[RMDB]
RNA sequence: GGGAACGACUCGAGUAGAGUCGAAAAUAACAUCGUAGUGUAAGACGAAAAGUCAACGUCGCUUGCCAGCAGGACCACCAAAGGAAUACGGUUCGGUAACUACUCGAGAUCCCAAGCGAUAACACAACGUAUAGAAGUGAUUCGUCACUUCUAUACGAAAAGAAACAACAACAACAAC
Reactivity to DMS in 0.01 (KOAc 150mM, MgCl2 10mM, bicine 150mM(pH8.5), 24C), signal-to-noise 7, nucleotides 027 to 126: u010a080a140c140a060u000c050g010u000a080g020u000g010u000a090a080g000a040c020g000a060a070a070a110g010u000c060a060a080c110g010u000c020g020c060u000u000g010c040c040a060g000c070a050g010g000a080c050c050a060c040c060a050a100a090g010g010a070a070u000a050c100g000g010u000u000c020g000g010u010a070a070c010u000a000c000u000c000g000a020g000a110u010c000c010c010a080a080g010c120g000a060u000a030a040c090a070c170a070a120
Reactivity to 2A3 in 0.01 (KOAc 150mM, MgCl2 10mM, bicine 150mM(pH8.5), 24C), signal-to-noise 9, nucleotides 027 to 126: u060a010a020c020a060u070c040g050u040a090g050u040g050u160a080a070g030a050c030g070a040a120a100a030g110u070c060a030a040c050g040u020c020g000c060u020u080g040c010c020a020g020c030a040g020g070a030c020c010a020c020c030a120a060a040g100g040a100a070u070a070c040g050g010u020u020c010g000g020u050a150a100c010u010a010c000u000c010g000a010g010a030u000c000c000c000a000a010g060c030g120a100u120a190a020c060a000c020a110a070

Notes
Chemical mapping of a 177-nucleotide RNA with DMS and 2A3. Reactivities are rounded to 0.1 and cut off at 0 and 3. In probing experiments dimethyl sulfate is read out at A N1 and C N3, which are open when not base-paired.